[RMDB]
RNA sequence: GGGAACGACUCGAGUAGAGUCGAAAAGAUUACGAGUCGUAGUGGAAUCGAUACUACGCACGAGAUUCCAAGGUCUCUGUAGUACGUCCGCUGGUGACGUCUUUGGAGUCACGUUCGAUAUACGAAAGGAUAGUACUAGGUUCGCCUAGUACUAUCCAAAAGAAACAACAACAACAAC
Reactivity to DMS in 0.01 (KOAc 150mM, MgCl2 10mM, bicine 150mM(pH8.5), 24C), signal-to-noise 5, nucleotides 027 to 126: g000a040u000u030a090c010g010a040g000u000c000g010u000a020g030u000g000g010a050a050u040c020g020a130u010a000c040u000a020c010g000c180a090c140g000a060g000a010u000u000c170c170a120a090g010g000u000c010u000c000u020g000u000a040g010u010a000c010g010u010c000c000g030c050u010g000g020u000g000a010c020g020u030c020u010u010u040g000g000a100g000u010c030a040c030g010u000u000c010g010a110u030a080u020a080c090g000a050a110a120
Reactivity to 2A3 in 0.01 (KOAc 150mM, MgCl2 10mM, bicine 150mM(pH8.5), 24C), signal-to-noise 7, nucleotides 027 to 126: g040a010u120u130a040c040g010a010g020u030c020g010u050a040g040u040g050g090a080a070u150c020g010a010u000a070c010u010a000c020g060c050a020c150g010a010g000a020u080u060c150c040a070a040g100g010u020c010u000c030u070g050u040a010g020u030a020c010g010u020c010c000g000c100u060g090g020u100g010a010c020g130u040c050u090u080u170g070g020a030g000u010c010a000c040g010u020u060c060g010a030u020a030u050a280c110g040a120a030a010